The record gives the reactivity of an RNA of 177 nucleotides to 2A3 and DMS.
RNA sequence: GGGAACGACUCGAGUAGAGUCGAAAACUUCAUGGUGAGGGGGUCGGGGAGUUCAGAGUUUGGACUCCCACGUGCAUCCCUGCACCAUGGGCAGCCUUUUUAUCUUAGCCAGAAGGCUGAGAAGUAACUAACUAGAAACGUUCGCGUUUCUAGUUAGAAAAGAAACAACAACAACAAC
Reactivity to 2A3 in 0.01 (KOAc 150mM, MgCl2 10mM, bicine 150mM(pH8.5), 24C), signal-to-noise 4, nucleotides 027 to 126: c010u100u050c000a020u010g000g000u000g010a040g010g020g010g000g020u000c000g010g000g000g010a010g010u000u000c020a040g060a150g300u160u280u090g010g010a000c000u000c010c010c010a040c000g030u070g010c010a130u130c000c000c000u010g020c000a000c000c000a000u000g000g020g000c030a050g030c010c000u130u150u020u080u100a120u050c010u020u040a000g020c010c010a130g080a300a070g150g000c000u000g010a020g010a040a020g020u070a070a060
Reactivity to DMS in 0.01 (KOAc 150mM, MgCl2 10mM, bicine 150mM(pH8.5), 24C), signal-to-noise 4, nucleotides 027 to 126: c040u010u010c000a010u000g000g020u000g010a090g010g000g000g020g010u000c020g000g000g000g000a010g020u000u000c000a030g000a220g020u000u010u000g020g010a010c010u000c000c000c000a000c020g030u010g010c080a050u010c000c000c000u000g020c010a010c010c000a010u000g000g000g010c110a150g010c010c000u000u000u010u020u010a100u030c040u010u010a040g020c050c040a200g020a120a120g010g010c000u000g000a030g000a060a130g000u010a090a180

Values cover nucleotides 27 to 126.
For DMS, 6,735 sequencing reads were counted.
The RNA was probed in 150 mM KOAc, 10 mM MgCl2 and 150 mM bicine (pH 8.5) at 24 C.
The data come from the RNA Mapping Database (RMDB), library OK2TST.
For DMS the reverse transcriptase was MarathonRT.